RNA sequence: GGGAACGACUCGAGUAGAGUCGAAAAUGAGGCGGGCAAGAUUACGCCGCUCCGCACCCCGGGUGGUCACUUUCGGUUCAGGCGCUCCGAUGUCCUCGCGAUGUUGAAGGUCGGCGCCUGAUGGCCCGCGACGCAGCUGCCGAGCUGCUGUCAGCGGCAAUUUAAGCGAUUUCGAUCGCUUAAAUUGAAAAGAAACAACAACAACAAC
Reactivity to DMS in 0.01 (KOAc 150mM, MgCl2 10mM, bicine 150mM(pH8.5), 24C), signal-to-noise 3, nucleotides 027 to 156: u010g020a050g030g020c040g000g010g050c040a130a150g010a180u010u010a110c060g030c020c010g000c010u000c020c010g010c100a210c050c060c010c030g010g000g030u000g030g020u020c060a090c080u000u000u000c040g020g020u010u000c010a070g010g020c000g020c010u000c020c020g000a070u020g020u010c010c020u010c110g030c090g030a060u010g010u010u000g010a060a080g020g000u010c020g000g030c020g030c010c000u000g000a020u010g040g000c010c030c020g030c020g010a030c030g010c020a120g030c020u010g000c130c120g010a160g030c000u000g020c000u000g010u000c000a050g050c020g000g000
Reactivity to 2A3 in 0.01 (KOAc 150mM, MgCl2 10mM, bicine 150mM(pH8.5), 24C), signal-to-noise 3, nucleotides 027 to 156: u190g020a080g170g300c050g020g040g020c060a090a060g050a200u130u100a060c080g020c010c010g010c010u050c010c020g060c030a080c000c070c010c010g030g020g000u070g020g030u070c050a030c080u060u130u110c080g080g020u060u010c010a000g000g000c000g010c040u060c050c010g030a050u110g060u070c010c020u080c060g030c110g070a100u130g060u300u080g100a140a060g060g020u060c080g050g000c000g000c000c000u000g000a000u000g010g000c000c010c000g000c000g000a000c000g000c010a000g000c000u110g090c060c050g220a040g000c000u010g010c100u140g000u010c010a020g000c010g010g010

This 207-nucleotide RNA was probed chemically with DMS and 2A3.
Values are in units of 0.01, from 0 to 300, in steps of 10.
The 2A3 profile rests on 2,709 reads.
The RNA was probed in 150 mM KOAc, 10 mM MgCl2 and 150 mM bicine (pH 8.5) at 24 C.
Values cover nucleotides 27 to 156.
It was measured as part of the RMDB library OK3TST.